[RMDB]
RNA sequence: GGGAACGACUCGAGUAGAGUCGAAAAGGAAAAACGAAAACACAGCUCGGGGAGCCCCCACCAGCCGGCGCCUGUGCCAGCUCACCUCUGGCCAUGGCGCAGCUGCUGGUGCACACAGCGGCCAAGGACCUGUCAUUGGAUUCGUCCAAUGACAGGUAAAAGAAACAACAACAACAAC
Reactivity to DMS in 0.01 (KOAc 150mM, MgCl2 10mM, bicine 150mM(pH8.5), 24C), signal-to-noise 3, nucleotides 027 to 126: g010g030a050a070a100a100a100c040g000a100a130a100a060c070a070c060a180g010c040u000c040g000g000g000g000a220g010c100c010c030c070c010a000c010c020a000g030c000c240g000g030c040g000c030c010u000g030u060g000c000c010a010g000c100u020c230a070c220c170u000c010u000g010g000c000c000a010u000g010g000c000g020c010a010g010c110u050g000c010u040g010g000u000g020c110a100c120a050c110a050g010c060g000g000c020c030a060a120g000g000
Reactivity to 2A3 in 0.01 (KOAc 150mM, MgCl2 10mM, bicine 150mM(pH8.5), 24C), signal-to-noise 2, nucleotides 027 to 126: g080g020a070a100a060a000a070c100g050a020a030a110a000c060a020c020a050g010c020u020c020g030g000g000g020a030g030c000c000c030c000c000a000c000c000a000g000c000c020g050g000c000g000c000c000u090g050u230g010c000c000a010g000c020u060c070a100c000c020u050c010u030g000g000c010c000a030u130g000g000c000g000c000a000g000c000u030g000c000u010g000g010u010g020c010a020c000a000c010a050g040c020g020g020c030c020a050a070g030g050